[RMDB]
RNA sequence: GGGAACGACUCGAGUAGAGUCGAAAAAAAAGCAGCAUGGAAUACAUAUUUAUCUUAUUACAAAAUCUGUAUUCUUUUUACUUUGCUACUCUAGACUCUCUUAUUAUUGUGAAGCAGCUUUAACUACUGCAAGACAGAAGUCUUGGCCUUCAGAGUAGGACUGAUAUAAUUUCGAUUAUAUCAGUCCAAAAGAAACAACAACAACAAC
Reactivity to 2A3 in 0.01 (KOAc 150mM, MgCl2 10mM, bicine 150mM(pH8.5), 24C), signal-to-noise 1, nucleotides 027 to 156: a000a000a000a000g070c010a000g000c010a000u080g010g040a040a040u010a010c000a010u050a020u040u090u160a170u020c010u150u260a190u300u120a120c040a000a190a000a020u030c030u030g000u000a010u010u010c000u120u070u030u030u060a090c040u100u130u130g000c000u010a050c010u010c000u010a040g020a030c000u030c000u000c010u200u000a150u090u070a140u260u140g090u080g050a050a000g000c010a000g010c020u100u150u060a180a100c050u110a030c030u010g000c030a060a170g080a000c050a010g020a160a020g030u000c000u010u010g010g020c010c000u160u150c090a070g000a050g060u060a120

Source: RMDB library OK3TST, as collected in RNAgym. An RNA of 207 nucleotides, treated with 2A3 and read out base by base. Reactivities are given for positions 27 through 156. The 2A3 profile rests on 544 reads. For 2A3 the reverse transcriptase was SuperScript II with manganese.